[RMDB]
RNA sequence: GGGAACGACUCGAGUAGAGUCGAAAACGCCUGGUGGACGAAGGCUCCAAGCGUGCUGCUCAGGCCAUGAGCGACGUGCGUGACCUUUACGUGGCGGGUUUCCACAGCGCCGUCGAUGCCGCCAACCCAGUGGUAGUGUAUUCGUACACUACCACUGAAAAGAAACAACAACAACAAC
Reactivity to DMS in 0.01 (KOAc 150mM, MgCl2 10mM, bicine 150mM(pH8.5), 24C), signal-to-noise 9, nucleotides 027 to 126: c110g020c030c090u000g010g050u000g010g000a100c100g000a050a030g010g010c040u000c040c020a050a160g000c010g020u000g000c020u010g010c000u000c020a060g000g030c210c240a120u000g000a030g010c010g000a020c020g010u000g010c230g010u000g000a130c030c020u000u000u000a210c130g010u000g010g010c020g000g000g000u010u000u000c040c040a090c140a130g000c050g010c020c020g010u000c040g010a110u010g010c020c010g010c020c020a080a160c120c080
Reactivity to 2A3 in 0.01 (KOAc 150mM, MgCl2 10mM, bicine 150mM(pH8.5), 24C), signal-to-noise 9, nucleotides 027 to 126: c070g040c010c030u060g040g020u030g010g020a030c040g020a030a010g030g010c090u030c040c010a060a050g010c010g020u130g170c090u140g000c000u010c020a070g200g100c150c070a250u060g010a010g010c020g020a030c020g020u060g020c050g090u150g050a230c000c000u020u030u080a080c070g010u040g010g000c000g000g010g000u010u080u030c050c020a050c040a040g050c140g050c030c010g020u030c030g010a050u120g030c000c010g000c010c010a040a050c040c030
An RNA of 177 nucleotides, treated with DMS and 2A3 and read out base by base. Reactivities are given for positions 27 through 126. For DMS the reverse transcriptase was MarathonRT. For 2A3 the reverse transcriptase was SuperScript II with manganese. The RNA was probed in 150 mM KOAc, 10 mM MgCl2 and 150 mM bicine (pH 8.5) at 24 C. The data come from the RNA Mapping Database (RMDB), library OK2TST.